The record gives the reactivity of an RNA of 177 nucleotides to DMS and 2A3.
The 2A3 profile rests on 565 reads.
Conditions: 150 mM KOAc, 10 mM MgCl2 and 150 mM bicine (pH 8.5), 24 C.
Values cover nucleotides 27 to 126.
RNA sequence: GGGAACGACUCGAGUAGAGUCGAAAACAGAUGCCAUCCUACAUGUUCACAUUGAAGAGAUAAGCCUCUCAGAAGGAAGAUAACCAUAGAAAGUUGAAAAGAGAAACCUCUUUAGAUGCUGGUUUAUCAUUUUUUCAUCCUUCGGGAUGAAAAAAUGAAAAGAAACAACAACAACAAC
Reactivity to DMS in 0.01 (KOAc 150mM, MgCl2 10mM, bicine 150mM(pH8.5), 24C), signal-to-noise 1, nucleotides 027 to 126: c110a060g020a080u000g040c000c050a010u000c060c000u000a030c120a070u000g020u020u070c060a070c120a110u060u030g040a070a120g000a140g000a080u010a160a200g030c020c000u000c050u010c010a070g030a060a090g000g000a050a030g000a000u000a060a080c000c010a120u050a140g010a040a000a100g000u000u000g000a030a030a060a000g000a040g000a210a090a110c180c000u000c000u000u030u000a050g000a060u000g000c050u000g000g020u000u000u050a040u000
Reactivity to 2A3 in 0.01 (KOAc 150mM, MgCl2 10mM, bicine 150mM(pH8.5), 24C), signal-to-noise 2, nucleotides 027 to 126: c020a010g020a030u150g040c020c000a020u000c000c020u020a040c030a170u130g030u140u100c100a100c090a160u040u130g080a110a020g070a000g000a040u020a170a020g100c000c010u010c000u020c040a050g030a050a050g080g010a010a020g020a020u150a020a010c000c000a020u060a040g130a130a090a040g020u050u060g050a000a130a000a000g050a000g000a070a070a060c050c000u020c000u070u010u020a070g050a060u020g020c040u010g050g090u180u000u000a010u000